This 177-nucleotide RNA was probed chemically with 2A3 and DMS. The 2A3 profile rests on 3,074 reads. DMS adducts were read by reverse transcription with MarathonRT.
RNA sequence: GGGAACGACUCGAGUAGAGUCGAAAACGACAGACGUUCGCGUCUGUCGAAAUACCGAGGUUGUUGCUCGGUAAAAAACAACAACCCUUGGAAACAAGGGAAAAAGGAGAUGGUUCGCCAUCUCCAACUACUAAUUUUACUUCGGUAAAAUUAGUAGAAAAGAAACAACAACAACAAC
Reactivity to 2A3 in 0.01 (KOAc 150mM, MgCl2 10mM, bicine 150mM(pH8.5), 24C), signal-to-noise 1, nucleotides 027 to 126: c010g020a010c000a000g020a000c010g000u060u050c160g030c000g120u000c000u010g010u010c010g000a010a000a000u110a020c000c000g010a000g000g020u050u020g000u030u030g040c000u000c020g000g010u010a030a040a010a000a000a000c030a010a020c010a030a050c000c010c000u020u010g030g000a070a030a040c010a010a010g010g000g050a080a000a000a010a030g000g000a000g000a000u010g010g030u060u080c190g030c060c000a000u000c000u000c000c000a010a000
Reactivity to DMS in 0.01 (KOAc 150mM, MgCl2 10mM, bicine 150mM(pH8.5), 24C), signal-to-noise 4, nucleotides 027 to 126: c020g010a010c000a000g000a020c010g030u000u010c210g040c010g030u000c000u000g010u000c000g000a020a060a110u010a200c010c000g010a010g000g000u000u000g000u000u000g010c010u000c000g020g000u000a000a010a040a030a020a010c040a030a030c080a040a190c000c000c000u000u000g000g010a160a100a180c000a010a010g000g000g010a000a010a030a100a060g030g010a010g020a010u000g000g000u000u010c250g040c010c000a000u000c000u000c000c010a010a030